[RMDB]
RNA sequence: GGGAACGACUCGAGUAGAGUCGAAAACCAGGGAUUUUCAUCCUCGAGUUUCUUGAUGGUUCUCCUGCUCUUCCGGAGCUUUCUUUCGAGGUCUUCCGCGUCUUUUCUUGCUUGGAUCCAUUUCUCGUCGGGUAUGUGUUCGCACAUACCAAAAGAAACAACAACAACAAC
Reactivity to 2A3 in 0.01 (KOAc 150mM, MgCl2 10mM, bicine 150mM(pH8.5), 24C), signal-to-noise 9, nucleotides 027 to 129: c010c000a030g040g020g010a020u070u060u080u170c070a050u050c010c010u020c040g050a050g010u030u040u020c050u040u100g090a110u110g050g000u050u030c020u020c020c020u050g040c010u010c000u110u030c040c050g030g000a030g000c000u030u050u010c010u010u080u050c030g030a030g040g030u000c020u050u010c030c010g040c030g080u020c020u020u110u040u020c030u050u080g040c020u020u040g030g010a030u030c020c010a090u040u060u010c050u020c020g200u050c120g050
Reactivity to DMS in 0.01 (KOAc 150mM, MgCl2 10mM, bicine 150mM(pH8.5), 24C), signal-to-noise 9, nucleotides 027 to 129: c030c010a160g040g040g030a010u010u030u050u050c120a060u030c030c030u000c090g010a090g010u000u000u000c020u000u040g010a140u000g010g010u020u010c040u030c000c000u010g000c060u010c040u040u000c080c070g010g010a110g020c100u000u000u000c030u020u010u020c050g010a020g030g030u000c030u010u010c030c030g010c080g040u020c030u010u000u000u000c040u020u020g000c020u010u010g010g030a090u010c030c040a100u010u010u000c000u020c010g070u030c150g000